[RMDB]
RNA sequence: GGGAACGACUCGAGUAGAGUCGAAAAGCGUACUACUUCCGUCACCACUCGCUUUGAUCUAUACGAGCUUUAUCCCAAAUAGGAUAAAGCGAGUAUAGGGAGCGAGUGCAAGUCGGAAGUAUCGCAAAAGAUCUUGUUAGUUCGCUAACAAGAUCAAGAAGAACUAGAACUUCGGUUCUAGUUCUUCAAAAGAAACAACAACAACAAC
Reactivity to 2A3 in 0.01 (KOAc 150mM, MgCl2 10mM, bicine 150mM(pH8.5), 24C), signal-to-noise 4, nucleotides 027 to 156: g020c020g040u100a110c040u000a000c000u030u010c010c000g020u010c040a070c100c020a000c020u000c000g020c020u260u140u110g070a090u070c000u010a000u000a000c000g000a010g000c000u000u000u000a000u010c020c020c030a220a300a230u300a110g000g000a000u000a000a000a000g000c000g000a000g000u000a010u000a000g000g010g000a010g000c000g010a000g000u000g000c010a060a250g000u000c000g000g020a010a000g000u000a000u040c000g000c000a050a050a030a030g000a000u000c000u000u000g010u010u000a010g010u030u050c240g000c210u000a000a000c000a000a000g000a000u000c000a000a010
Reactivity to DMS in 0.01 (KOAc 150mM, MgCl2 10mM, bicine 150mM(pH8.5), 24C), signal-to-noise 2, nucleotides 027 to 156: g010c010g040u010a040c100u000a010c000u020u020c020c020g050u000c020a250c200c000a010c000u000c010g020c000u000u010u010g000a090u000c000u000a010u000a000c000g000a300g010c000u000u000u000a020u010c000c000c030a070a130a300u010a040g000g010a020u000a010a000a000g040c000g010a160g010u000a000u000a010g000g000g010a010g010c000g020a040g020u010g000c080a010a120g040u010c010g000g000a000a000g010u000a000u010c000g050c010a040a080a090a180g000a010u000c000u000u000g000u000u000a010g020u000u000c300g040c000u000a020a020c000a010a000g010a010u000c010a070a080
Notes
The record gives the reactivity of an RNA of 207 nucleotides to 2A3 and DMS. The reactions ran in a buffer of 150 mM KOAc, 10 mM MgCl2 and 150 mM bicine (pH 8.5), at 24 C. Reactivities are given for positions 27 through 156.